[RMDB]
RNA sequence: GGGAACGACUCGAGUAGAGUCGAAAAGAGGAGGAUCUCCAGCUAAAGAGUGGAGGAAAUCUCGGAAAGCUUCCCCCAAGAAGAACUGGGACGCUCUCAAGAAGGAGGAGAUUUCCCGAAAGCUGGAUAGCUGAAUGCUUCGGCAUUCAGAAAAGAAACAACAACAACAAC
Reactivity to DMS in 0.01 (KOAc 150mM, MgCl2 10mM, bicine 150mM(pH8.5), 24C), signal-to-noise 4, nucleotides 027 to 129: g020a050g030g020a020g000g020a040u030c010u020c030c020a040g040c050u000a070a100a130g020a050g000u050g040g020a080g050g020a030a060a040u020c000u000c000g000g000a090a060a030g030c060u000u010c080c030c000c130c080a080a100g030a120a070g020a010a080c180u010g000g000g000a040c110g030c000u010c070u020c050a100a080g010a070a050g040g020a070g000g000a010g000a010u000u000u000c020c020c040g030a070a100a080g000c000u000g000g000a060u030a050g010
Reactivity to 2A3 in 0.01 (KOAc 150mM, MgCl2 10mM, bicine 150mM(pH8.5), 24C), signal-to-noise 9, nucleotides 027 to 129: g050a010g030g010a000g010g010a020u010c000u000c020c010a010g010c030u100a070a110a020g150a060g040u180g040g050a090g030g030a040a050a040u030c020u010c020g030g050a100a060a010g020c020u040u030c000c010c000c010c030a030a030g080a070a010g020a110a060c090u060g000g000g020a020c040g000c010u010c000u000c020a030a110g090a060a030g130g040a030g020g000a000g010a010u010u010u020c000c000c010g040a080a070a000g010c030u030g020g020a050u110a030g020
This 170-nucleotide RNA was probed chemically with DMS and 2A3.
The data come from the RNA Mapping Database (RMDB), library 15KLIB.
Conditions: 150 mM KOAc, 10 mM MgCl2 and 150 mM bicine (pH 8.5), 24 C.
For 2A3, 37,780 sequencing reads were counted.
For DMS, 52,687 sequencing reads were counted.
2A3 adducts were read by reverse transcription with SuperScript II with manganese.